This 177-nucleotide RNA was probed chemically with 2A3 and DMS. Conditions: 150 mM KOAc, 10 mM MgCl2 and 150 mM bicine (pH 8.5), 24 C.
RNA sequence: GGGAACGACUCGAGUAGAGUCGAAAAAUGCCGCAUUCAGCGACGGUUACUCUAGUGGGCGACUGUCUAUCUAGCGUUGACAUCUACAUACUAUAUAGUAAUACCAAUACUCAAGACUACGAAACGGCACGCCAGUGCUAUUCGUAGCACUGGCGUGAAAAGAAACAACAACAACAAC
Reactivity to 2A3 in 0.01 (KOAc 150mM, MgCl2 10mM, bicine 150mM(pH8.5), 24C), signal-to-noise 6, nucleotides 027 to 126: a010u120g020c000c010g000c060a100u070u120c040a030g050c020g140a070c010g080g020u020u060a040c000u000c020u040a040g070u090g030g010g020c030g110a150c120u130g000u050c020u020a080u010c020u020a010g020c020g050u010u040g020a010c010a070u010c020u100a040c050a100u110a060c020u010a030u060a050u090a240g040u060a050a080u040a130c020c030a040a040u020a070c030u040c090a040a040g040a080c040u070a040c090g050a080a070a010c010g010g000
Reactivity to DMS in 0.01 (KOAc 150mM, MgCl2 10mM, bicine 150mM(pH8.5), 24C), signal-to-noise 3, nucleotides 027 to 126: a070u020g000c010c030g040c100a120u040u010c090a140g030c160g050a060c090g060g030u000u000a150c000u000c020u000a070g050u000g000g000g000c050g030a090c160u000g000u000c000u000a070u050c000u040a090g000c090g000u000u000g000a080c040a150u030c000u010a000c060a150u020a020c130u000a080u000a130u020a050g020u020a080a060u000a070c050c050a060a100u020a030c050u000c130a060a040g020a050c070u000a030c000g040a040a050a130c100g010g000